This 177-nucleotide RNA was probed chemically with 2A3 and DMS.
It was measured as part of the RMDB library M2PK50.
Values cover nucleotides 27 to 126.
Values are in units of 0.01, from 0 to 300, in steps of 10.
The DMS profile rests on 1,219 reads.
The RNA was probed in 150 mM KOAc, 10 mM MgCl2 and 150 mM bicine (pH 8.5) at 24 C.
RNA sequence: GGGAACGACUCGAGUAGAGUCGAAAAGGAAACUUGUUCGCAAGUUUCCAAAGAACGCUGCAUCGCAAAGCGACGCCGCGAGAGCGGCCAUACGCGAAGAAAAAACAAAUGGGUUCGCCCAUUUGAAUCACCUUAUAACGUUCGCGUUAUAAGGUGAAAAAGAAACAACAACAACAAC
Reactivity to 2A3 in 0.01 (KOAc 150mM, MgCl2 10mM, bicine 150mM(pH8.5), 24C), signal-to-noise 1, nucleotides 027 to 126: g000g000a010a010a000c010u020u000g030u080u040c090g000c080a010a000g000u010u000u000c000c000a000a000a000g010a060a010c020g030c040u020g010c050a150u060c040g030c050a080a070a030g020c000g060a040c090g020c030c000g000c000g030a050g010a010g150c010g000g050c010c000a070u150a090c120g000c020g000a000a070g040a020a100a000a010a020a000c000a020a010a000u020g000g000g000u030u050c230g090c000c000c000a010u020u000u010g010a010a040
Reactivity to DMS in 0.01 (KOAc 150mM, MgCl2 10mM, bicine 150mM(pH8.5), 24C), signal-to-noise 2, nucleotides 027 to 126: g000g030a000a000a020c000u000u010g020u000u040c200g000c000a000a000g010u000u000u000c020c000a020a060a060g020a100a110c050g010c010u000g000c100a130u010c000g000c000a090a170a140g000c000g010a150c190g000c020c020g000c010g010a110g010a250g020c010g020g020c000c130a080u000a060c190g000c020g010a040a090g020a020a040a050a070a110a130c010a010a020a000u000g010g030g010u010u010c300g010c000c000c000a010u000u000u000g010a110a130